Description:
An RNA of 177 nucleotides, treated with 2A3 and DMS and read out base by base. The 2A3 profile rests on 1,251 reads. 2A3 adducts were read by reverse transcription with SuperScript II with manganese. The reactions ran in a buffer of 150 mM KOAc, 10 mM MgCl2 and 150 mM bicine (pH 8.5), at 24 C.

[RMDB]
RNA sequence: GGGAACGACUCGAGUAGAGUCGAAAAGACCUCGCCGGUGACGGGGUUGACCGCCACCCCGGUCGGAGCGGUGCCGACGGUGAUGGGGGAGCCGGUGACGGUGUUGGUGGUCGGGUCGAUCACCGACGAUUAUCUGGGACUUCGGUCCCAGAUAAUCAAAAGAAACAACAACAACAAC
Reactivity to 2A3 in 0.01 (KOAc 150mM, MgCl2 10mM, bicine 150mM(pH8.5), 24C), signal-to-noise 1, nucleotides 027 to 126: g050a010c010c010u000c010g040c070c040g130g000u030g010a040c000g000g010g000g040u010u080g020a050c030c030g030c020c050a090c050c000c000c040g090g000u020c010g000g010a020g110c090g070g000u190g040c000c010g040a030c030g040g210u270g050a190u250g000g020g000g000g010a010g030c020c000g060g010u030g040a060c060g040g000u010g040u100u080g030g000u010g000g020u020c070g040g030g060u110c050g030a120u000c000a000c000c000g010a020c040
Reactivity to DMS in 0.01 (KOAc 150mM, MgCl2 10mM, bicine 150mM(pH8.5), 24C), signal-to-noise 1, nucleotides 027 to 126: g010a130c030c010u000c050g000c010c000g030g000u000g000a110c030g000g000g000g010u000u000g000a060c010c020g020c040c000a110c010c030c010c010g020g020u000c020g010g000a090g010c190g000g000u010g020c000c010g010a020c000g000g020u000g030a140u010g020g000g000g000g010a290g020c000c020g030g010u000g000a120c060g010g010u000g010u010u000g000g020u000g000g000u000c000g020g010g000u000c030g010a080u000c000a020c000c000g020a020c040